[RMDB]
RNA sequence: GGGAACGACUCGAGUAGAGUCGAAAAAUGCCAUGACUGACUGUGAUAACUCUGUAGGUAUUCGUUCGACAGAAGAUUAAUGAACAACCUAUUAUGAAAGCCCUAUCCCUAGUGAUUAGCCUAGUCGUUUAAGGCACACAUUCGUGUGUGCCUUAAAAAAAGAAACAACAACAACAAC
Reactivity to 2A3 in 0.01 (KOAc 150mM, MgCl2 10mM, bicine 150mM(pH8.5), 24C), signal-to-noise 4, nucleotides 027 to 126: a000u160g020c030c000a010u100g030a050c050u020g000a000c010u050g000u050g080a060u070a180a040c000u000c040u040g040u020a010g020g010u080a150u030u200c140g020u010u020c000g130a090c140a150g140a230a070g030a110u130u230a150a070u220g030a000a000c010a000a000c000c000u060a080u280u090a130u110g100a090a000a010g000c000c000c000u030a010u080c020c020c010u000a010g050u000g110a110u020u050a010g010c000c020u050a050g010u010c020g000
Reactivity to DMS in 0.01 (KOAc 150mM, MgCl2 10mM, bicine 150mM(pH8.5), 24C), signal-to-noise 4, nucleotides 027 to 126: a090u010g010c010c010a050u040g010a080c040u020g000a070c030u010g020u000g000a120u010a060a090c070u000c050u000g020u000a040g000g000u010a130u000u030c100g000u000u000c040g040a110c180a120g020a060a090g000a160u030u000a120a070u010g010a010a020c080a070a050c030c020u020a030u010u010a030u070g010a040a130a100g010c020c020c030u000a080u000c020c000c010u020a040g010u010g000a080u000u000a040g000c050c010u010a030g020u000c100g020
This 177-nucleotide RNA was probed chemically with 2A3 and DMS.
Conditions: 150 mM KOAc, 10 mM MgCl2 and 150 mM bicine (pH 8.5), 24 C.
Source: RMDB libraries RFM100 and RFMREP, as collected in RNAgym.
For DMS the reverse transcriptase was MarathonRT.